Structure probing data (2A3 and DMS) for a 177-nucleotide construct.
2A3 adducts were read by reverse transcription with SuperScript II with manganese.
The DMS profile rests on 1,406 reads.
The reactions ran in a buffer of 150 mM KOAc, 10 mM MgCl2 and 150 mM bicine (pH 8.5), at 24 C.
RNA sequence: GGGAACGACUCGAGUAGAGUCGAAAAAGGCUUUCGUCAGAAGUCACGCCUUCGGAUUCGUCUUUCCGUCCCUGAUCGGCCCGCAGAUAAUACUGUCCAGCGGCGAACGCCAGGAGGGCGCGGUUGGCAUGUGUUGUGACUUCGGUCACAACACAUGAAAAGAAACAACAACAACAAC
Reactivity to 2A3 in 0.01 (KOAc 150mM, MgCl2 10mM, bicine 150mM(pH8.5), 24C), signal-to-noise 1, nucleotides 027 to 126: a030g030g000c040u080u080u000c050g140u050c050a080g000a110a020g020u020c050a050c080g050c020c000u000u090c030g080g040a060u020u100c050g020u020c060u020u080u000c030c000g050u070c000c000c040u000g060a050u020c000g040g010c000c070c020g000c010a010g020a070u070a160a130u290a280c050u030g020u050c020c030a060g030c020g030g000c030g030a050a030c110g000c020c010a040g080g010a090g000g050g050c090g010c000g000g090u000u060g010g000
Reactivity to DMS in 0.01 (KOAc 150mM, MgCl2 10mM, bicine 150mM(pH8.5), 24C), signal-to-noise 2, nucleotides 027 to 126: a030g000g010c020u000u010u000c020g000u010c160a160g020a080a040g000u010c080a130c190g000c130c010u000u010c080g000g000a130u000u000c200g010u010c020u000u000u000c030c070g000u000c120c020c010u020g010a090u010c040g030g000c030c010c000g020c040a080g010a080u000a110a100u020a160c130u000g020u020c050c060a100g000c020g000g010c180g000a050a100c070g000c080c050a080g020g000a250g040g000g020c050g040c030g000g030u000u000g000g000